[RMDB]
RNA sequence: GGGAACGACUCGAGUAGAGUCGAAAAUAGCGAAGUAGGAUUUUAUGCGUCAAGUGUUCACAGGCUGGGGAGUCGCCGUGAAACUAAAAGCAGAAAGCGUGCUGCUUACGAUAUAAUUUCCGCACCCAUAAGAAGUCUCUGUUCGCAGAGACUUCAAUCAUACGGCAAGGUUCGCCUUGCCGUAUGAAAAAGAAACAACAACAACAAC
Reactivity to 2A3 in 0.01 (KOAc 150mM, MgCl2 10mM, bicine 150mM(pH8.5), 24C), signal-to-noise 1, nucleotides 027 to 156: u150a020g040c040g040a130a020g030u100a100g030g020a010u000u010u000u030a030u040g020c000g000u010c050a100a070g050u040g080u140u010c000a010c050a120g020g000c030u110g020g000g060g010a100g120u080c040g000c020c000g020u010g010a040a020a010c010u000a010a000a070a040g000c010a000g060a080a160a030g110c110g070u070g040c010u000g000c000u010u000a020c010g050a010u000a000u000a110a020u020u000u000c000c000g010c020a060c010c000c020a050u060a080a090g000a000a000g000u000c000u000c000u010g040u030u050c220g010c070a000g000a000g000a000c000u010u000c000a000a000
Reactivity to DMS in 0.01 (KOAc 150mM, MgCl2 10mM, bicine 150mM(pH8.5), 24C), signal-to-noise 1, nucleotides 027 to 156: u000a100g000c080g000a110a110g000u020a080g040g010a080u000u020u000u000a000u000g000c020g030u010c110a080a140g000u020g030u000u000c020a030c030a110g000g050c010u000g010g000g020g030a090g020u000c020g030c000c020g010u000g010a050a070a020c040u000a120a040a050a050g020c000a020g020a090a030a140g010c140g040u000g020c010u000g010c010u000u000a040c040g000a140u020a020u000a020a070u010u000u000c000c010g030c040a120c010c020c030a160u010a070a170g010a030a050g060u000c000u000c000u000g020u010u030c250g050c010a020g020a020g000a030c010u000u000c010a020a100

Structure probing data (2A3 and DMS) for a 207-nucleotide construct.
For DMS, 2,152 sequencing reads were counted.
The RNA was probed in 150 mM KOAc, 10 mM MgCl2 and 150 mM bicine (pH 8.5) at 24 C.